This 177-nucleotide RNA was probed chemically with DMS and 2A3.
RNA sequence: GGGAACGACUCGAGUAGAGUCGAAAACAAAAUAAUUUUUCGCCGCUGAGGCAUGGGCGUGCGCUCUGUCAGCAUGCCGAGCAGCGGGCGGAACGCACGCUCGUUCCCAACUCUACUCGAGAAAAAAGUGAUACAAAGAGUUCGCUCUUUGUAUCACAAAAGAAACAACAACAACAAC
Reactivity to DMS in 0.01 (KOAc 150mM, MgCl2 10mM, bicine 150mM(pH8.5), 24C), signal-to-noise 1, nucleotides 027 to 126: c220a070a120a140a040u030a030a120u010u000u000u000u000c100g000c160c060g000c230u000g030a160g010g010c030a010u040g020g030g000c000g040u010g000c030g010c030u000c030u010g000u000c030a030g100c000a120u000g010c010c230g000a100g000c020a040g000c020g000g070g000c020g000g050a010a030c030g040c010a030c100g000c060u000c000g000u000u000c000c000c000a140a200c030u000c000u000a010c020u000c000g000a000g000a000a030a020a110a050a000
Reactivity to 2A3 in 0.01 (KOAc 150mM, MgCl2 10mM, bicine 150mM(pH8.5), 24C), signal-to-noise 1, nucleotides 027 to 126: c050a020a150a090a080u300a070a110u110u040u020u080u130c090g010c080c030g060c180u130g070a070g060g000c010a000u090g010g040g000c020g000u010g000c010g000c010u000c000u000g000u020c000a010g020c070a190u050g030c030c080g060a090g000c020a000g010c020g020g000g000c000g000g000a010a020c000g000c000a000c000g010c000u000c000g010u000u000c000c000c000a000a020c000u000c010u000a000c000u000c010g020a000g000a050a100a000a000a000a000
Conditions: 150 mM KOAc, 10 mM MgCl2 and 150 mM bicine (pH 8.5), 24 C.
For 2A3 the reverse transcriptase was SuperScript II with manganese.